[RMDB]
RNA sequence: GGGAACGACUCGAGUAGAGUCGAAAACAUUCGACAGAUCCACUUCUUUGGAUCGUACAAAGUCAAUCAGUCGACCCGGUGUCGCAACCAUAAUAUCGACGGGCCCGGCAGCCAAUUCCUUACGCUGCAAUAAUGCUACCUUCGGGUAGCAUUAUUGAAAAGAAACAACAACAACAAC
Reactivity to 2A3 in 0.01 (KOAc 150mM, MgCl2 10mM, bicine 150mM(pH8.5), 24C), signal-to-noise 4, nucleotides 027 to 126: c020a110u090u120c020g000a000c020a040g020a020u000c000c000a030c110u260u120c100u210u230u100g010g010a020u010c010g010u050a030c050a020a140a020g050u070c020a020a090u040c030a040g060u010c010g020a050c020c030c020g030g050u070g010u020c030g000c070a020a040c020c020a040u120a300a060u110a210u140c060g030a040c000g000g020g020c010c040c000g050g020c010a010g000c010c020a040a100u090u080c000c000u030u030a050c080g010c040u060g030
Reactivity to DMS in 0.01 (KOAc 150mM, MgCl2 10mM, bicine 150mM(pH8.5), 24C), signal-to-noise 6, nucleotides 027 to 126: c140a130u000u000c070g020a040c050a130g010a010u010c010c010a080c300u010u010c150u010u010u010g010g000a010u000c010g010u000a100c210a040a100a120g000u000c060a090a060u000c070a090g010u010c010g000a120c070c050c030g010g010u000g020u010c110g000c100a080a110c030c020a090u010a060a100u010a090u000c040g020a080c040g010g010g000c050c040c040g000g020c040a040g000c020c080a070a140u010u000c020c040u000u010a090c200g010c080u000g010
The record gives the reactivity of an RNA of 177 nucleotides to 2A3 and DMS. Reactivities are given for positions 27 through 126. For DMS the reverse transcriptase was MarathonRT. The 2A3 profile rests on 4,763 reads. For 2A3 the reverse transcriptase was SuperScript II with manganese.